Source: RMDB library OK2TRN, as collected in RNAgym. The record gives the reactivity of an RNA of 177 nucleotides to 2A3 and DMS. 2A3 adducts were read by reverse transcription with SuperScript II with manganese.
RNA sequence: GGGAACGACUCGAGUAGAGUCGAAAAUAUGUAUGUGAGGUGAUUAUGCCAGAUAAACCACUAAGUAUUGGGAUGAUCACAACCGAAACAGGAUGGAUGACAGUCAAUUAUUUAGUCGAGGAUAACAGCAUCGUAAUAAGUUCGCUUAUUACGAUGCAAAAGAAACAACAACAACAAC
Reactivity to 2A3 in 0.01 (KOAc 150mM, MgCl2 10mM, bicine 150mM(pH8.5), 24C), signal-to-noise 4, nucleotides 027 to 126: u240a050u100g120u080a050u110g090u040g070a060g090g000u030g040a090u000u090a010u100g150c030c010a000g020a090u150a070a130a070c060c040a100c150u100a130a040g060u040a160u120u040g010g010g040a040u020g010a030u020c000a010c020a030a050c040c030g080a080a080a040c050a020g010g060a030u060g070g030a040u060g040a020c020a010g090u060c030a050a080u090u040a080u140u200u100a040g010u030c020g010a050g080g000a050u060a120a050c040a060
Reactivity to DMS in 0.01 (KOAc 150mM, MgCl2 10mM, bicine 150mM(pH8.5), 24C), signal-to-noise 5, nucleotides 027 to 126: u020a080u000g010u020a060u020g010u010g010a130g020g020u000g010a040u000u020a030u000g010c000c010a050g010a090u010a050a110a120c100c090a060c150u010a080a090g030u000a090u000u000g010g000g000a070u000g000a040u000c010a030c000a120a080c060c030g000a110a100a100c150a060g010g000a080u000g000g000a100u000g000a060c090a060g010u000c060a030a070u000u010a060u000u010u000a060g010u010c070g020a110g010g000a080u010a060a090c200a110